[RMDB]
An RNA of 177 nucleotides, treated with 2A3 and DMS and read out base by base. For DMS, 2,729 sequencing reads were counted. Source: RMDB library OK1LIB, as collected in RNAgym. 2A3 adducts were read by reverse transcription with SuperScript II with manganese. The reactions ran in a buffer of 150 mM KOAc, 10 mM MgCl2 and 150 mM bicine (pH 8.5), at 24 C.
RNA sequence: GGGAACGACUCGAGUAGAGUCGAAAACGAGCAGCCACGGGUCUACUACGGCGAGGUGAUCGCCCAGGCCGAUCCGGACUACGCGAUCGUGGGCGGAGCCCCGGGGUCCGCGCCGCGCGAGUAUGACCGUACCCUUUACCUUCGGGUAAAGGGUACGAAAAGAAACAACAACAACAAC
Reactivity to 2A3 in 0.01 (KOAc 150mM, MgCl2 10mM, bicine 150mM(pH8.5), 24C), signal-to-noise 3, nucleotides 027 to 126: c060g010a040g050c040a020g040c030c020a100c050g030g020g000u000c020u060a060c050u030a070c070g040g000c030g010a050g020g080u150g060a160u060c010g010c000c010c000a060g020g070c040c090g000a000u000c000c000g000g060a060c050u170a070c120g010c050g070a080u150c020g020u040g000g040g000c000g030g030a090g000c000c020c040c020g080g000g000g040u000c000c000g010c030g040c000c010g010c000g000c040g000a010g020u070a120u210g030a070c020
Reactivity to DMS in 0.01 (KOAc 150mM, MgCl2 10mM, bicine 150mM(pH8.5), 24C), signal-to-noise 2, nucleotides 027 to 126: c070g000a050g010c050a030g020c060c080a240c050g010g000g000u000c020u030a110c070u000a200c280g010g020c030g010a060g000g040u000g020a150u000c090g000c000c030c080a160g010g020c090c100g020a090u030c000c000g070g000a190c040u010a060c090g000c110g000a100u010c010g080u000g000g000g000c030g000g000a100g040c000c000c070c080g050g030g030g000u000c020c030g010c030g000c010c010g000c000g010c080g020a060g000u060a060u030g060a120c050